[RMDB]
RNA sequence: GGGAACGACUCGAGUAGAGUCGAAAAGAAGAGAAUAAGCGCGGAUAUCUCUGUCGGUAGAGCUGCAGGACCGACACCUGCGAGUAAAGGGAUCAAGACCCUGUUCGCGCAAAGAUUGAAGUAGAAGGGUACGACUAGGUUUCGACCUAGUCGUACCAAAAGAAACAACAACAACAAC
Reactivity to DMS in 0.01 (KOAc 150mM, MgCl2 10mM, bicine 150mM(pH8.5), 24C), signal-to-noise 1, nucleotides 027 to 126: g080a070a090g000a120g010a120a160u020a040a300g000c020g060c000g010g040a050u030a090u000c020u000c000u000g000u000c070g000g000u000a000g000a160g010c020u010g000c020a030g000g000a090c000c110g050a010c030a080c080c020u000g010c200g000a030g100u080a120a020a040g000g030g000a040u000c150a130a240g040a160c030c010c000u000g050u000u020c000g010c030g000c040a110a040a030g020a130u000u020g000a080a090g000u000a000g040a200a070g030
Reactivity to 2A3 in 0.01 (KOAc 150mM, MgCl2 10mM, bicine 150mM(pH8.5), 24C), signal-to-noise 1, nucleotides 027 to 126: g200a020a000g050a000g060a100a300u170a280a070g000c000g000c000g000g000a020u030a030u050c000u040c010u060g100u130c010g000g100u140a020g000a000g190c050u060g000c010a000g000g000a120c010c010g000a000c010a010c000c000u000g000c060g000a000g000u110a000a120a030g030g000g000a030u250c030a080a060g030a070c000c000c000u000g030u000u000c040g000c000g040c020a030a020a030g030a020u080u030g080a070a000g110u180a000g040a190a000g090

Structure probing data (DMS and 2A3) for a 177-nucleotide construct. Values cover nucleotides 27 to 126. The reactions ran in a buffer of 150 mM KOAc, 10 mM MgCl2 and 150 mM bicine (pH 8.5), at 24 C. 2A3 adducts were read by reverse transcription with SuperScript II with manganese.